[RMDB]
RNA sequence: GGGAACGACUCGAGUAGAGUCGAAAAGCUGCAGCGUACUCUUCACCUCUGCAAUCUUAUGCCUGCUGGACUCAUUCCUGCGGUUAUGAUUAUGUCUACAACCCUUUCUUUGUCGAUGUUCAACAGUAUAGGAUGGCCUUCGGGCCAUCCAAAAGAAACAACAACAACAAC
Reactivity to DMS in 0.01 (KOAc 150mM, MgCl2 10mM, bicine 150mM(pH8.5), 24C), signal-to-noise 3, nucleotides 027 to 129: g050c060u050g040c020a000g020c100g040u000a070c100u000c020u000u000c060a070c020c060u000c010u050g000c120a080a180u010c140u020u020a010u060g020c080c020u000g050c050u050g020g040a100c230u030c200a000u050u010c100c010u010g010c130g010g050u020u030a140u100g050a060u040u030a080u050g010u000c010u010a060c030a030a030c020c030c040u020u050u030c070u030u050u000g020u020c030g040a050u000g050u050u000c040a030a110c060a050g020u030a030u060a050
Reactivity to 2A3 in 0.01 (KOAc 150mM, MgCl2 10mM, bicine 150mM(pH8.5), 24C), signal-to-noise 3, nucleotides 027 to 129: g020c010u040g000c000a020g030c010g030u050a110c040u040c000u040u000c000a000c010c010u010c000u010g040c040a050a020u030c000u000u060a050u160g040c000c020u080g020c020u020g000g000a060c020u050c150a040u130u090c000c000u060g020c000g020g000u020u010a040u030g030a040u040u080a030u160g040u010c000u010a010c010a070a130c010c000c000u020u170u000c060u020u030u040g040u000c000g050a060u160g030u000u090c020a030a020c010a000g030u030a030u010a040